[RMDB]
RNA sequence: GGGAACGACUCGAGUAGAGUCGAAAAGUCGGAGCGAACGCACAGAAUGAGGCCGUCUUCUGCGACUGAAUAAUCAUUUUGGGCGGCAAACGCGAUGAUGGCCCGCCGGAUUUCGUCGUCAGUGAGGCUAAAACCCAAGGUUCGCCUUGGGUUUUAGAAAAGAAACAACAACAACAAC
Reactivity to 2A3 in 0.01 (KOAc 150mM, MgCl2 10mM, bicine 150mM(pH8.5), 24C), signal-to-noise 1, nucleotides 027 to 126: g050u030c000g060g060a040g030c010g000a080a020c020g000c020a020c030a080g040a060a040u080g030a060g070g020c070c050g020u100c040u280u030c060u120g080c080g000a020c010u060g050a050a110u200a200a030u020c040a100u010u050u050u050g020g040g020c050g010g040c130a110a090a010c030g020c050g030a040u080g020a030u020g070g040c000c000c040g000c020c010g060g050a100u110u110u000c060g020u010c000g030u070c020a050g050u020g110a000g030g050
Reactivity to DMS in 0.01 (KOAc 150mM, MgCl2 10mM, bicine 150mM(pH8.5), 24C), signal-to-noise 4, nucleotides 027 to 126: g010u000c010g020g000a300g020c040g000a090a040c050g000c040a050c040a040g010a040a030u010g020a090g000g010c060c060g010u000c100u010u010c130u010g030c050g000a020c010u000g000a070a070u010a110a140u010c020a070u000u010u020u000g000g010g020c010g000g010c120a020a050a100c040g010c040g010a230u000g000a060u000g010g010c050c000c020g020c080c070g000g000a080u000u010u000c100g010u000c060g010u000c030a050g000u010g000a120g000g000
About this RNA: Conditions: 150 mM KOAc, 10 mM MgCl2 and 150 mM bicine (pH 8.5), 24 C. An RNA of 177 nucleotides, treated with 2A3 and DMS and read out base by base. The DMS profile rests on 3,579 reads.